Structure probing data (DMS and 2A3) for a 207-nucleotide construct. The reactions ran in a buffer of 150 mM KOAc, 10 mM MgCl2 and 150 mM bicine (pH 8.5), at 24 C. For DMS, 2,938 sequencing reads were counted. DMS adducts were read by reverse transcription with MarathonRT. Reactivities are rounded to 0.1 and cut off at 0 and 3. High DMS reactivity at an A or C suggests that its Watson-Crick edge is free.
RNA sequence: GGGAACGACUCGAGUAGAGUCGAAAACGUAGGGCGCAGGCGGCGCACAAGGGCUUCCAGUUGACUGCAGUCCAGAGAAUCCAAAGAGCCGUUCGCCAAGUCGGAGGGAAGAGACUGCAGGUUGACUUGCAAGAGAGCGGUAAGGGCGCGGGUGAGAGAUAAUAAAGUGAUUCGUCACUUUAUUAUCAAAAGAAACAACAACAACAAC
Reactivity to DMS in 0.01 (KOAc 150mM, MgCl2 10mM, bicine 150mM(pH8.5), 24C), signal-to-noise 2, nucleotides 027 to 156: c050g030u000a100g010g000g050c040g020c040a090g040g000c050g030g000c020g040c060a100c070a120a090g000g030g000c000u000u000c010c030a130g020u000u010g000a080c010u000g020c020a050g020u010c000c030a160g020a190g020a090a100u000c030c030a050a100a160g000a110g050c000c020g050u020u000c030g000c050c020a070a150g020u010c070g010g010a160g000g020g030a210a130g000a150g000a090c020u010g020c020a020g010g000u000u000g010a050c050u010u010g000c040a070a060g000a140g010a120g020c040g010g000u010a060a090g000g030g010c070g010c040g010g030g040u000g000a140g000a190
Reactivity to 2A3 in 0.01 (KOAc 150mM, MgCl2 10mM, bicine 150mM(pH8.5), 24C), signal-to-noise 3, nucleotides 027 to 156: c040g020u040a040g000g050g000c020g020c070a030g090g000c030g000g020c030g020c040a050c050a060a060g040g010g010c030u070u010c010c030a020g000u010u030g050a020c010u010g020c020a000g010u000c010c010a000g020a010g020a170a050u030c030c030a040a080a040g080a060g100c050c020g030u090u080c050g080c080c020a050a040g080u080c060g000g020a050g010g020g050a030a060g050a040g000a070c000u010g010c020a010g000g050u010u010g000a000c000u010u030g010c010a040a030g060a010g000a010g090c000g010g020u060a060a050g060g000g010c070g010c050g010g000g000u060g020a100g000a010